[RMDB]
RNA sequence: GGGAACGACUCGAGUAGAGUCGAAAAAUGAGAUCCCAUCUUGCACACUGUGCUAAUUUGAGAUUCUCAUGCCUCCUACUUGGAGAGAUCUGGACUAGAAGUCGGGGCAUCUGACUCUGCCAGCCACAAAACGUACAAGGCUUCGGCCUUGUACGAAGUAGAUGGAAGGCUUCGGCCUUCCAUCUACAAAAGAAACAACAACAACAAC
Reactivity to 2A3 in 0.01 (KOAc 150mM, MgCl2 10mM, bicine 150mM(pH8.5), 24C), signal-to-noise 2, nucleotides 027 to 156: a000u040g000a000g000a000u020c000c000c000a040u020c000u000u020g000c000a020c040a090c170u300g010u020g020c070u130a040a030u060u020u000g020a030g020a040u300u070c000u000c000a010u020g010c000c000u050c020c000u080a190c140u200u300g030g000a060g010a020g030a050u080c000u000g020g020a070c020u080a100g020a140a020g090u010c010g000g010g000g130c050a150u120c070u040g010a010c010u010c000u000g000c010c020a020g030c020c000a130c020a090a180a080a000c010g000u000a000c000a000a000g000g030c050u010u110c210g030g010c000c000u000u000g010u000a000c000g010a000a010
Conditions: 150 mM KOAc, 10 mM MgCl2 and 150 mM bicine (pH 8.5), 24 C. An RNA of 207 nucleotides, treated with 2A3 and read out base by base.